This 177-nucleotide RNA was probed chemically with DMS. The DMS profile rests on 911 reads.
[RMDB]
RNA sequence: GGGAACGACUCGAGUAGAGUCGAAAAGUUGUAGCUGGUGAAAUUGAUUUGCCGGUCCGGAAACAUUUCUUGAACUCUCUGCCGCAGACCGCUGAAAUUUUGCUCUUCCGGUAACAGAAGUACAUGCUGACUCGUUAGUUUUCGAACUAACGAGUCAAAAAGAAACAACAACAACAAC
Reactivity to DMS in 0.01 (KOAc 150mM, MgCl2 10mM, bicine 150mM(pH8.5), 24C), signal-to-noise 1, nucleotides 027 to 126: g010u010u000g030u000a080g040c000u020g000g020u000g000a040a050a200u000u010g000a170u000u000u000g000c080c040g050g000u020c020c030g000g000a100a080a130c120a090u000u010u000c130u000u010g020a070a060c080u000c050u000c040u000g020c040c050g000c120a050g000a020c040c050g000c040u000g000a040a040a100u000u000u000u020g010c050u010c050u000u000c040c010g020g010u000a070a070c060a030g000a050a060g020u000a050c090a040u010g020c210
The reactions ran in a buffer of 150 mM KOAc, 10 mM MgCl2 and 150 mM bicine (pH 8.5), at 24 C. DMS adducts were read by reverse transcription with MarathonRT. It was measured as part of the RMDB library OK2TRN.